[RMDB]
RNA sequence: GGGAACGACUCGAGUAGAGUCGAAAAGAUAUGGAACCUUUUUGGGUGGGAGAGCCUACCUCGGAAACGAGGUAGCUCGAGGAUCACCAGGUUCCUAAGUCAAAGGUAGGUGCUUCGGCACCUACCACAAGAUCCCUCAGUUCGCUGAGGGAUCUUGAAAAGAAACAACAACAACAAC
Reactivity to 2A3 in 0.01 (KOAc 150mM, MgCl2 10mM, bicine 150mM(pH8.5), 24C), signal-to-noise 2, nucleotides 027 to 126: g010a000u050a030u140g000g010a020a000c000c000u050u260u150u300u300g210g010g000u040g000g030g040a190g010a010g000c020c080u000a010c000c000u000c020g010g000a040a040a020c020g010a000g000g000u000a000g010c000u000c020g010a100g000g060a050u010c010a000c020c030a000g000g000u010u000c000c000u000a030a010g020u030c040a150a080a110g010g000u000a000g020g000u000g020c040u100u220c300g030g000c000a000c000c000u020a000c000c010a010
Reactivity to DMS in 0.01 (KOAc 150mM, MgCl2 10mM, bicine 150mM(pH8.5), 24C), signal-to-noise 2, nucleotides 027 to 126: g000a050u000a190u010g000g000a020a010c000c010u000u000u000u000u010g000g020g010u000g000g010g000a060g030a050g010c170c120u000a010c000c010u000c000g010g000a020a050a060c000g010a020g000g010u010a010g010c000u000c000g020a120g040g000a120u000c020a020c000c020a030g020g000u010u010c000c010u000a040a100g010u000c060a090a140a110g020g010u000a000g010g030u000g000c010u000u020c240g050g030c010a000c010c000u000a010c000c000a010